Conditions: 150 mM KOAc, 10 mM MgCl2 and 150 mM bicine (pH 8.5), 24 C. This 177-nucleotide RNA was probed chemically with 2A3 and DMS.
[RMDB]
RNA sequence: GGGAACGACUCGAGUAGAGUCGAAAAGAUAUGGACCAUGGCGAGUGAGGAGACUUGGGAGAGGUAGCUCGGAAACGAGCUACUCCCCACCUCCCAAGUCUCCCUGAAUCUCGCAUGGUCCUAAGUCCAGUCUAGAAAAGUUCGCUUUUCUAGACUGAAAAGAAACAACAACAACAAC
Reactivity to 2A3 in 0.01 (KOAc 150mM, MgCl2 10mM, bicine 150mM(pH8.5), 24C), signal-to-noise 1, nucleotides 027 to 126: g030a020u070a040u190g000g010a000c000c020a020u050g300g220c010g000a000g020u080g090a300g060g010a000g000a000c010u000u010g010g010g000a030g010a000g000g050u000a010g000c020u000c000g020g000a060a040a010c010g010a000g000c000u000a000c010u010c010c010c000c010a000c010c000u000c000c000c000a010a010g000u000c000u020c010c010c000u000g010a010a030u020c000u000c010g000c000a000u000g000g000u000c000c000u000a010a000g000u000c020
Reactivity to DMS in 0.01 (KOAc 150mM, MgCl2 10mM, bicine 150mM(pH8.5), 24C), signal-to-noise 4, nucleotides 027 to 126: g010a110u000a280u010g010g000a030c010c010a030u010g010g030c010g010a030g030u020g010a220g010g000a010g010a020c010u000u000g000g000g000a020g010a200g020g010u000a010g010c000u000c020g000g000a070a060a220c000g020a010g020c000u000a000c010u000c060c020c020c030a300c080c000u000c000c000c000a010a010g010u000c000u000c010c020c100u000g000a100a100u000c000u000c000g000c000a020u000g010g000u000c000c000u000a000a100g000u000c020
2A3 adducts were read by reverse transcription with SuperScript II with manganese.
It was measured as part of the RMDB library TTRINS.